[RMDB]
RNA sequence: GGGAACGACUCGAGUAGAGUCGAAAAGCGCGUAGGUUCAGAUGAUGGGCCCGCAUCUGUACGAAAGCGAGACGAAAGUCCAGCCUACGUGCAUGAGCACGCGGGCCCCGUGCUCUACUGCAAAAGAGGCGACUACGUAUUUCGAUACGUAGUCGCCAAAAGAAACAACAACAACAAC
Reactivity to 2A3 in 0.01 (KOAc 150mM, MgCl2 10mM, bicine 150mM(pH8.5), 24C), signal-to-noise 1, nucleotides 027 to 126: g030c000g060c000g000u000a010g030g000u040u200c030a020g030a140u120g000a060u040g020g000g000c010c000c000g000c000a000u000c000u020g240u130a050c150g160a040a070a090g040c070g000a090g000a030c030g060a230a000a000g000u000c010c010a020g000c000c000u000a000c000g000u000g000c000a000u050g000a000g000c010a000c000g000c000g000g000g000c000c000c000c000g000u040g000c030u000c020u050a060c030u030g110c020a030a120a120a000g230a070